[RMDB]
RNA sequence: GGGAACGACUCGAGUAGAGUCGAAAAGGGGUCUCUCUCGAUUGUACAAUGAUGGUGGAACUACUCCUGAAGCCUCCACGGGAGCCACUUGAGUAUAGAGAGAGAGACGGAGGCACCCAAAGUCGCUUCCCUGAAGUUCGCUUCAGGGAAGCGACAACCACCAUGAUAAGUUCGCUUAUCAUGGUGGAAAAGAAACAACAACAACAAC
Reactivity to 2A3 in 0.01 (KOAc 150mM, MgCl2 10mM, bicine 150mM(pH8.5), 24C), signal-to-noise 1, nucleotides 027 to 156: g000g000g020g000u010c000u000c000u000c000u010c000g220a190u140u300g030u040a060c090a300a300u040g000a030u020g020g060u020g010g010a050a080c110u200a060c000u300c000c010u010g020a020a010g020c000c000u010c000c000a000c000g000g010g010a010g000c000c000a000c040u010u040g000a020g010u010a030u100a060g050a000g000a010g000a000g000a000g000a070c000g000g000a000g000g040c000a000c000c000c000a110a050a000g000u000c000g010c010u000u010c000c000c080u000g010a000a020g000u080u200c250g080c220u020u000c000a000g000g000g000a000a000g010c020g010a000c000a000a020